[RMDB]
RNA sequence: GGGAACGACUCGAGUAGAGUCGAAAAGUGAUGUGCGACAGUUUACUGGAGGCUGCUUUGCGGUGUACCUGAGGCCGGAUAGGUACUUCGAGUCGUAUGACCGGCCAUAUGCGACGAGCACAUCUGAGGCUUCGUCGGUGUUCGCAUCGAUGGGGCCAAAAGAAACAACAACAACAAC
Reactivity to DMS in 0.01 (KOAc 150mM, MgCl2 10mM, bicine 150mM(pH8.5), 24C), signal-to-noise 9, nucleotides 027 to 126: g010u020g000a020u010g010u000g010c010g000a140c110a090g010u010u010u020a130c080u010g010g010a190g000g010c010u000g000c030u020u010u040g010c030g010g020u000g010u020a060c010c010u010g000a160g010g010c010c000g000g000a140u020a060g010g010u010a020c040u010u020c080g000a090g000u000c040g010u010a060u020g000a110c010c000g000g010c010c010a080u020a030u020g010c080g010a060c070g010a280g000c010a020c050a020u000c010u000g000a230
Reactivity to 2A3 in 0.01 (KOAc 150mM, MgCl2 10mM, bicine 150mM(pH8.5), 24C), signal-to-noise 9, nucleotides 027 to 126: g160u080g010a020u020g010u020g020c030g080a060c100a070g020u040u080u120a130c070u060g040g030a040g080g010c010u010g010c040u090u110u250g020c020g010g010u040g020u090a070c000c000u030g030a110g030g000c000c010g000g010a060u100a080g080g040u040a030c000u040u090c060g040a050g040u030c020g010u040a050u080g070a070c010c000g010g020c010c000a050u090a030u120g060c040g020a040c030g010a050g010c000a000c000a020u000c010u010g030a020
Structure probing data (DMS and 2A3) for a 177-nucleotide construct.
The RNA was probed in 150 mM KOAc, 10 mM MgCl2 and 150 mM bicine (pH 8.5) at 24 C.
2A3 adducts were read by reverse transcription with SuperScript II with manganese.
In probing experiments dimethyl sulfate is read out at A N1 and C N3, which are open when not base-paired.
For DMS, 126,421 sequencing reads were counted.